[RMDB]
RNA sequence: GGGAACGACUCGAGUAGAGUCGAAAAGGGCUUGACGCAUCGCCCGAAUAAGAUGCAUGUGCUUUUGCACUAAGAUAAAUGUCCGUAUAGUAGGGGACCUAGAACCUACUCAUUAAUGUCCGAAGAGUCUGGGACGAUCAUCAGGCAAGACUAAGAAGCAUGGGUAAAUGUUCGCAUUUACCCAUGCAAAAGAAACAACAACAACAAC
Reactivity to 2A3 in 0.01 (KOAc 150mM, MgCl2 10mM, bicine 150mM(pH8.5), 24C), signal-to-noise 2, nucleotides 027 to 156: g000g000g000c010u090u040g020a080c100g000c010a010u010c000g010c000c000c000g000a000a000u120a020a000g000a000u020g000c010a020u150g000u010g010c010u140u120u260u270g000c000a010c010u010a000a110g050a110u140a070a160a060u220g020u030c000c080g040u080a100u050a120g040u020a000g000g020g010g030a010c010c000u040a050g070a070a000c010c000u000a000c000u000c000a010u000u300a110a080u130g070u030c010c020g060a110a070g000a030g050u010c000u040g000g010g030a010c000g020a040u100c030a010u000c040a010g000g050c070a020a040g010a020c010u140a060a050g070a100a020
Reactivity to DMS in 0.01 (KOAc 150mM, MgCl2 10mM, bicine 150mM(pH8.5), 24C), signal-to-noise 1, nucleotides 027 to 156: g010g040g020c050u000u010g040a080c130g070c020a050u000c030g010c010c030c080g000a040a100u010a060a030g000a050u020g000c040a210u000g030u000g040c010u020u000u000u070g010c000a000c010u000a020a110g000a170u000a070a090a040u010g000u000c030c050g030u010a130u010a060g000u000a040g010g000g010g000a170c090c050u010a070g000a170a180c020c020u020a030c010u010c070a060u010u010a010a190u010g000u150c030c080g010a230a130g030a150g000u010c010u020g000g020g000a040c010g030a020u010c110a060u000c000a050g020g020c080a060a040g030a110c000u010a070a130g030a140a230